[RMDB]
RNA sequence: GGGAACGACUCGAGUAGAGUCGAAAAGUUAUGGAAAUCGUCUUAGCUACCACUACAACAACAAUGCUGGACGGUGAUGGUUCGACUUACUCGAAACCAUCACGUAGUGGUAGUCGUUCCCAUUCAAGACUCCGAUUGGGUUCGCCCAAUCGGAGUCAAAAGAAACAACAACAACAAC
Reactivity to 2A3 in 0.01 (KOAc 150mM, MgCl2 10mM, bicine 150mM(pH8.5), 24C), signal-to-noise 1, nucleotides 027 to 126: g070u120u110a060u180g130g010a000a030a210u050c010g000u030c010u140u130a010g080c060u040a060c000c060a010c030u150a020c020a220a000c000a020a010c040a160a230u200g060c010u010g030g040a020c100g000g020u010g010a000u020g030g040u040u000c030g010a060c090u120u250a100c000u050c020g030a070a040a050c010c020a030u030c000a000c060g040u090a000g000u000g000g000u000a000g010u020c010g010u010u060c000c010c000a030u040u080c010a010a040